[RMDB]
RNA sequence: GGGAACGACUCGAGUAGAGUCGAAAAGAUAUGGAUCUCGUGGGAGAGGCGUGAUCGGAAACGAUCACCGCCUCAUCGAUCACGAGAGUCCUAAGUCAAAACGACGGUAGGUUCGCCUACCGUCGAAUCAAUUUAUUUCCUUCGGGAAAUAAAUUGAAAAAGAAACAACAACAACAAC
Reactivity to 2A3 in 0.01 (KOAc 150mM, MgCl2 10mM, bicine 150mM(pH8.5), 24C), signal-to-noise 1, nucleotides 027 to 126: g000a010u010a010u050g000g000a010u000c000u000c000g000u010g000g000g000a020g000a000g000g000c010g000u020g000a000u020c010g010g000a010a000a000c010g000a000u000c010a010c010c040g020c020c010u000c000a000u030c000g000a000u000c000a000c000g020a000g000a010g010u000c000c010u000a010a010g000u010c000a040a090a050a080c030g000a000c010g000g010u000a010g010g110u040u070c300g120c120c010u000a000c000c010g000u000c000g000a000a010
Reactivity to DMS in 0.01 (KOAc 150mM, MgCl2 10mM, bicine 150mM(pH8.5), 24C), signal-to-noise 5, nucleotides 027 to 126: g010a020u010a010u010g000g010a150u000c000u000c000g010u010g000g010g010a000g010a010g040g010c000g020u000g000a010u000c000g020g000a010a010a030c010g000a000u010c000a000c300c080g000c000c000u000c000a080u000c050g010a020u020c000a000c010g000a020g000a030g010u000c010c000u000a000a060g000u010c000a020a110a150a220c030g000a000c000g000g000u000a020g000g000u000u000c250g000c010c000u000a000c000c000g000u000c000g000a020a020
Source: RMDB library TTRDEL, as collected in RNAgym. This 177-nucleotide RNA was probed chemically with 2A3 and DMS. For DMS, 4,221 sequencing reads were counted. The RNA was probed in 150 mM KOAc, 10 mM MgCl2 and 150 mM bicine (pH 8.5) at 24 C.